[RMDB]
Description: The data come from the RNA Mapping Database (RMDB), library OK1LIB. The record gives the reactivity of an RNA of 177 nucleotides to 2A3 and DMS. Reactivities are rounded to 0.1 and cut off at 0 and 3. For 2A3, 2,070 sequencing reads were counted.
RNA sequence: GGGAACGACUCGAGUAGAGUCGAAAAGAACAGGAUAACAGGACGCAAGAUAGGAAGUUCGGAUGAAUCGAGAAGAGCCGUAACUCGAGAACAACGGCAGCGUCCUGAAGAAUUUACGGCUCCAGAAAAUGAUCCGUAUGUUCGCAUACGGAUCAUUAAAAGAAACAACAACAACAAC
Reactivity to 2A3 in 0.01 (KOAc 150mM, MgCl2 10mM, bicine 150mM(pH8.5), 24C), signal-to-noise 3, nucleotides 027 to 126: g060a070a020c090a120g090g050a060u040a270a000c010a010g020g000a010c000g020c020a010a140g100a180u150a160g140g100a140a080g060u100u040c010g010g060a050u200g070a060a060u010c000g000a000g000a110a000g010a020g010c000c000g000u000a000a060c000u000c020g000a010g010a050a030c020a020a060c000g040g020c040a020g000c000g020u010c000c000u000g000a030a010g030a000a050u070u070u070a010c000g000g000c000u010c010c000a060g040a070a190
Reactivity to DMS in 0.01 (KOAc 150mM, MgCl2 10mM, bicine 150mM(pH8.5), 24C), signal-to-noise 4, nucleotides 027 to 126: g010a130a100c180a150g000g000a070u040a040a160c020a050g000g000a010c000g010c000a200a080g020a220u050a110g000g000a080a140g020u010u020c020g000g000a150u030g000a070a280u010c000g000a010g010a180a070g010a020g000c010c000g000u020a020a060c020u010c000g000a060g000a020a010c040a040a250c040g010g050c130a150g010c020g010u000c010c020u000g020a060a080g000a070a090u010u010u010a030c010g000g010c000u000c020c100a070g000a060a070